The record gives the reactivity of an RNA of 177 nucleotides to 2A3 and DMS. The reactions ran in a buffer of 150 mM KOAc, 10 mM MgCl2 and 150 mM bicine (pH 8.5), at 24 C.
[RMDB]
RNA sequence: GGGAACGACUCGAGUAGAGUCGAAAAGAUAUGGACUAUAAGCUUUCUACAGCGUUGAAAUCGGAAACGAUGGAGCUGUUCUAAGCAUUAUAGUCCUAAGUCAAAGGUUCUGGUUCGCCAGAACCAAGAAUCAAAGGUGGUUCGCCACCUUUGAUUCAAAAGAAACAACAACAACAAC
Reactivity to 2A3 in 0.01 (KOAc 150mM, MgCl2 10mM, bicine 150mM(pH8.5), 24C), signal-to-noise 2, nucleotides 027 to 126: g050a010u070a030u160g000g000a000c000u000a020u010a000a010g000c010u040u100u030c070u040a000c000a010g020c030g230u300u090g040a030a050a020u000c020g010g000a120a040a010c010g010a020u030g010g020a020g040c010u020g020u010u000c030u060a000a030g000c030a170u030u000a000u000a000g000u010c000c000u000a030a000g020u020c020a150a060a110g000g000u000u000c000u020g030g120u050u120c300g090c060c000a020g000a000a000c010c000a030a000
Reactivity to DMS in 0.01 (KOAc 150mM, MgCl2 10mM, bicine 150mM(pH8.5), 24C), signal-to-noise 2, nucleotides 027 to 126: g000a020u000a300u000g000g020a000c000u000a000u000a010a000g000c000u010u000u000c050u010a010c000a010g020c000g010u000u030g000a050a100a050u000c000g000g000a140a110a170c000g010a000u010g000g010a120g010c000u000g000u010u000c030u000a000a010g000c020a100u000u000a010u000a000g010u000c000c000u000a000a080g000u000c020a130a180a100g000g000u000u000c010u000g010g000u000u010c180g000c000c010a010g000a000a010c010c000a020a040